[RMDB]
RNA sequence: GGGAACGACUCGAGUAGAGUCGAAAACACCGCUUCGAGCACCCCGGCGAGCAACAGCACGUUGGCGCGGGUGAGGUCGCUCAGGCUGCCAGCGGUGCGUCCGGCGGCGUUGAUGACCGCGCUUGCGACUGCGGGAGGUCUUCGGACCUCCCGCAGUAAAAGAAACAACAACAACAAC
Reactivity to 2A3 in 0.01 (KOAc 150mM, MgCl2 10mM, bicine 150mM(pH8.5), 24C), signal-to-noise 1, nucleotides 027 to 126: c000a030c000c050g000c000u190u070c140g010a010g000c020a030c000c000c000c000g060g000c010g100a020g140c020a040a050c000a030g170c080a020c170g020u040u080g100g010c000g010c030g050g000g050u010g040a120g070g020u080c130g000c000u020c110a020g060g000c040u090g020c030c010a060g000c000g020g040u090g020c020g040u020c000c000g000g000c000g000g000c000g040u150u110g100a220u100g040a090c000c080g000c040g000c000u000u170g020c020g000
Source: RMDB library OK1LIB, as collected in RNAgym.
Chemical mapping of a 177-nucleotide RNA with 2A3.
For 2A3, 521 sequencing reads were counted.
The RNA was probed in 150 mM KOAc, 10 mM MgCl2 and 150 mM bicine (pH 8.5) at 24 C.